RNA sequence: GGGAACGACUCGAGUAGAGUCGAAAAUUUUCUGGUGAUGUUUUGGACUCCUAAAGAAACAUGAUAGUUUAGCUUUACCUGGAUGAUAAUCAGUGGGUACUGAAAAAUUUGACAUGAUAUGCUGGGGUGCUGACAUUACUUUCGAGUAAUGUCAGCAAAAAGAAACAACAACAACAAC
Reactivity to DMS in 0.01 (KOAc 150mM, MgCl2 10mM, bicine 150mM(pH8.5), 24C), signal-to-noise 1, nucleotides 027 to 126: u010u000u000u010c060u000g030g030u000g040a040u000g000u000u000u020u010g010g020a100c060u010c020c010u010a080a150a160g000a100a060a080c040a050u000g000a120u010a020g000u000u000u000a070g020c000u000u000u000a040c030c020u010g010g000a100u000g010a170u010a100a180u020c030a030g020u000g010g010g000u000a030c050u000g010a000a020a040a030a060u010u000u000g030a130c150a050u000g000a040u000a080u010g010c040u000g010g000g000g020